An RNA of 177 nucleotides, treated with 2A3 and DMS and read out base by base.
For 2A3 the reverse transcriptase was SuperScript II with manganese.
High DMS reactivity at an A or C suggests that its Watson-Crick edge is free.
For DMS the reverse transcriptase was MarathonRT.
Conditions: 150 mM KOAc, 10 mM MgCl2 and 150 mM bicine (pH 8.5), 24 C.
For 2A3, 4,400 sequencing reads were counted.
It was measured as part of the RMDB library RFMREP.
RNA sequence: GGGAACGACUCGAGUAGAGUCGAAAACGCGUGUUUCACUCUGGAGGUAGAGCUACUGGAUGGCCGAUGGGCCCCACAAGGUUACUGACGUCAGCCAAACUCCGAAUGCCAGAGUGUGAGAGCGCGGCAUUGAUCUAGGGUUCGCCCUAGAUCAAUGAAAAGAAACAACAACAACAAC
Reactivity to 2A3 in 0.01 (KOAc 150mM, MgCl2 10mM, bicine 150mM(pH8.5), 24C), signal-to-noise 3, nucleotides 027 to 126: c030g030c010g000u070g080u060u300u040c010a000c010u000c000u010g010g000a010g020g040u130a010g010a010g030c070u180a080c040u020g020g000a010u000g020g000c010c000g000a000u010g020g000g000c000c000c020c000a150c030a030a030g070g000u020u160a300c010u010g010a010c000g010u000c000a000g010c000c000a030a090a110c010u020c030c030g060a140a020u070g000c010c000a000g000a000g010u000g000u000g000a050g000a000g000c010g010c000g000g000
Reactivity to DMS in 0.01 (KOAc 150mM, MgCl2 10mM, bicine 150mM(pH8.5), 24C), signal-to-noise 5, nucleotides 027 to 126: c010g020c020g020u000g010u010u000u000c000a000c010u000c010u010g010g010a030g000g000u000a090g000a010g020c040u010a090c180u000g000g000a050u000g010g000c000c010g000a190u000g000g000g000c010c000c020c090a080c300a120a120g010g010u000u000a070c010u000g000a300c300g000u010c010a000g010c000c000a020a080a090c000u000c020c010g000a040a070u030g000c000c000a010g010a020g030u000g000u010g010a050g000a050g000c010g010c020g000g000